[RMDB]
RNA sequence: GGGAACGACUCGAGUAGAGUCGAAAAUGACGCUGCGCUUAUCGGGUCGGUGCCGGAUUGGUAAUUCAUUGAUAUUUUUGCAUUCCUCUCCGAGGGCAAUAAGGCGAAUGUCAUAACUACAAUACGUGAGAGACUAUGUAUUCGUACAUAGUCUCUCAAAAGAAACAACAACAACAAC
Reactivity to DMS in 0.01 (KOAc 150mM, MgCl2 10mM, bicine 150mM(pH8.5), 24C), signal-to-noise 3, nucleotides 027 to 126: u010g000a040c030g010c040u000g000c020g000c120u020u020a250u000c030g000g010g020u000c020g010g020u000g040c030c040g000g010a050u000u000g000g040u010a040a080u000u010c090a090u000u000g000a040u000a020u000u000u000u000u020g010c030a140u000u000c000c010u010c030u030c100c140g010a040g000g000g000c140a050a100u030a060a160g000g030c050g010a040a030u000g000u010c000a050u020a050a060c130u000a080c090a050a060u020a060c170g000u000
Reactivity to 2A3 in 0.01 (KOAc 150mM, MgCl2 10mM, bicine 150mM(pH8.5), 24C), signal-to-noise 8, nucleotides 027 to 126: u190g010a000c020g000c040u040g010c070g030c110u190u120a060u180c020g020g010g010u000c020g010g000u040g070c000c000g000g040a070u050u040g060g060u160a090a060u090u060c080a060u050u090g060a030u040a120u110u090u030u080u100g020c010a030u040u050c000c010u020c020u030c070c140g020a060g010g010g000c050a060a040u130a140a050g050g000c050g020a040a030u060g000u030c010a020u040a120a020c020u100a030c070a070a110u090a140c080g040u070